[RMDB]
RNA sequence: GGGAACGACUCGAGUAGAGUCGAAAAUGACAUAACUACGUGCCUCUUACGGCUUGUUUGGAUCUGCAGUCUGCCUAACAGUGACACCUACGUCCACACUAACGGAAGAGAAAGUGUCUCAAUGAAUAGCAUUUCAAUGGUGCAUACAACACAAGUAGGUACCAGUAUUAUUCGUAAUACUGGUACCAAAAGAAACAACAACAACAAC
Reactivity to 2A3 in 0.01 (KOAc 150mM, MgCl2 10mM, bicine 150mM(pH8.5), 24C), signal-to-noise 7, nucleotides 027 to 156: u090g040a020c040a050u110a090a050c040u060a040c090g080u070g040c010c000u080c020u060u080a030c060g030g040c010u010u050g040u040u020u040g060g020a070u010c030u080g010c020a030g060u020c020u040g020c010c000u040a090a020c030a050g020u020g080a020c010a030c030c020u050a040c050g020u000c020c010a040c010a020c040u080a120a030c070g040g020a050a020g050a040g020a100a100a000g020u020g040u010c000u020c050a060a130u080g060a060a050u040a090g000c030a020u030u050u100c090a110a100u130g040g000u030g050c010a020u090a100c040a080a020c060a010c020a050a070g170u180a040
Reactivity to DMS in 0.01 (KOAc 150mM, MgCl2 10mM, bicine 150mM(pH8.5), 24C), signal-to-noise 3, nucleotides 027 to 156: u010g000a100c040a100u000a100a110c030u000a080c080g000u000g030c040c030u010c040u000u000a120c050g010g030c060u010u000g020u000u010u010g020g010a060u000c040u010g060c040a070g020u000c010u010g040c000c020u010a060a120c110a120g010u010g020a050c020a050c020c000u000a090c030g000u010c000c010a080c080a090c050u000a010a050c060g040g000a060a080g000a090g020a090a080a070g000u000g020u000c040u020c060a080a110u010g000a040a110u000a130g020c060a070u000u000u010c060a050a090u010g010g010u000g020c030a080u000a070c070a050a110c080a060c040a080a060g010u000a050